This 207-nucleotide RNA was probed chemically with 2A3. Source: RMDB library VIROID, as collected in RNAgym. Values cover nucleotides 27 to 156.

RNA sequence: GGGAACGACUCGAGUAGAGUCGAAAAGGGGAAAUCUCUUCAGACUCGUCGAGGGGAGGGCGCCGCGGAUCACUGGCGUCCAGCACCGGAAACAGGAGCUCGUCUCCUUCCUUUCCACCGCUGGCUCCACAUCCGAUCGUCGCUUCUUCCUUCGCGACCACGCAUCAUGGUUCGCCAUGAUGCGUGGAAAAGAAACAACAACAACAAC
Reactivity to 2A3 in 0.01 (KOAc 150mM, MgCl2 10mM, bicine 150mM(pH8.5), 24C), signal-to-noise 1, nucleotides 027 to 156: g000g020g010g060a070a130a130u090c040u060c000u130u080c050a070g040a210c000u000c050g150u160c040g030a010g050g000g000g000a000g010g020g000c000g000c010c040g020c010g020g000a010u020c010a000c070u010g000g000c010g030u020c020c020a000g000c000a010c020c000g020g000a050a060a070c300a260g010g000a000g030c090u150c300g300u100c090u030c010c000u020u070c010c000u010u000u000c000c000a020c030c130g000c000u000g010g000c000u010c000c000a050c020a030u000c020c000g040a300u060c000g010u010c010g010c020u300u020c010u000u010c020c000u010u000c010g020c000g020a020